Structure probing data (DMS and 2A3) for a 207-nucleotide construct. The 2A3 profile rests on 1,844 reads. Conditions: 150 mM KOAc, 10 mM MgCl2 and 150 mM bicine (pH 8.5), 24 C. The data come from the RNA Mapping Database (RMDB), library OK3TST. For DMS, 1,974 sequencing reads were counted.

RNA sequence: GGGAACGACUCGAGUAGAGUCGAAAACUCACUCACUACGGUGAGUGAGAAUGCUUAAGCCUCAAUAAAGCUUGGCUUGAGUGCCUCAAGCAGAUAUAGACUGAAACAUUUAGUAUGGCCAAGCAGGGAGCAACCGCUCGAGUACGCUCGAGCGGAACGACUGAUUAAUGUUCGCAUUAAUCAGUCGAAAAGAAACAACAACAACAAC
Reactivity to DMS in 0.01 (KOAc 150mM, MgCl2 10mM, bicine 150mM(pH8.5), 24C), signal-to-noise 1, nucleotides 027 to 156: c000u050c000a030c000u010c010a030c010u010a070c300g070g000u000g000a020g060u000g000a010g010a040a030u000g010c000u000u010a070a110g000c010c010u000c040a080a110u000a140a160a200g010c000u000u000g020g000c000u000u010g010a050g060u000g050c090c000u010c050a130a050g000c020a120g000a180u010a130u000a070g020a090c040u010g000a080a030a070c050a060u000u010u000a120g020u000a150u010g030g030c000c010a000a050g000c010a250g000g030g010a050g020c030a120a220c000c010g020c000u000c000g020a020g000u010a130c300g080c050u000c010g010a010g010c000g010g000a000a010
Reactivity to 2A3 in 0.01 (KOAc 150mM, MgCl2 10mM, bicine 150mM(pH8.5), 24C), signal-to-noise 3, nucleotides 027 to 156: c000u000c000a010c000u000c000a000c000u040a040c220g070g000u000g000a000g000u000g000a000g000a030a050u100g000c000u030u030a040a020g010c000c000u020c030a070a140u100a220a120a020g000c020u000u030g010g000c000u020u020g040a020g010u120g020c000c000u080c100a040a030g020c000a010g110a080u100a050u100a190g140a090c060u160g110a100a110a010c040a060u070u150u110a110g050u150a150u160g030g000c000c000a000a020g030c030a030g010g030g020a050g030c050a080a060c000c000g000c010u000c010g000a010g000u020a030c190g040c070u000c000g010a000g000c000g000g000a000a010